[RMDB]
RNA sequence: GGGAACGACUCGAGUAGAGUCGAAAAUUCCAGCCUAUGGAAUCGUGCCGCCCAUGGAAGGGUAUCCAGGCAUCAAGGGACUCGGUGAAGACGUCGAGAGGGCGAAGGCCCUGCUCGCAGAGGCUGGGUUAUCAUUACUUUUCGAAGUAAUGAUAACAAAAGAAACAACAACAACAAC
Reactivity to 2A3 in 0.01 (KOAc 150mM, MgCl2 10mM, bicine 150mM(pH8.5), 24C), signal-to-noise 9, nucleotides 027 to 126: u100u020c000c000a000g000c000c010u080a090u120g060g060a080a050u060c030g020u050g020c010c020g030c010c010c020a070u120g110g080a100a140g160g030g030u070a070u040c040c020a030g070g000c020a050u100c070a130a110g060g000g060a080c020u010c070g030g010u060g060a120a040g090a040c050g020u150c010g020a000g000a010g010g010g000c030g040a060a040g140g000c000c000c000u030g060c000u000c010g000c010a020g010a010g060g000c010u010g040g000
Reactivity to DMS in 0.01 (KOAc 150mM, MgCl2 10mM, bicine 150mM(pH8.5), 24C), signal-to-noise 9, nucleotides 027 to 126: u010u010c000c000a020g010c020c020u000a080u010g010g010a170a080u000c050g010u000g000c020c030g010c020c010c040a120u010g010g020a180a120g010g010g010u000a050u010c060c070a130g010g010c060a060u000c140a080a110g010g000g000a100c040u000c020g010g010u000g000a130a110g010a100c090g010u010c010g010a020g000a040g000g010g010c010g010a160a100g000g000c000c000c000u000g010c010u000c010g010c050a160g000a030g000g010c000u000g000g000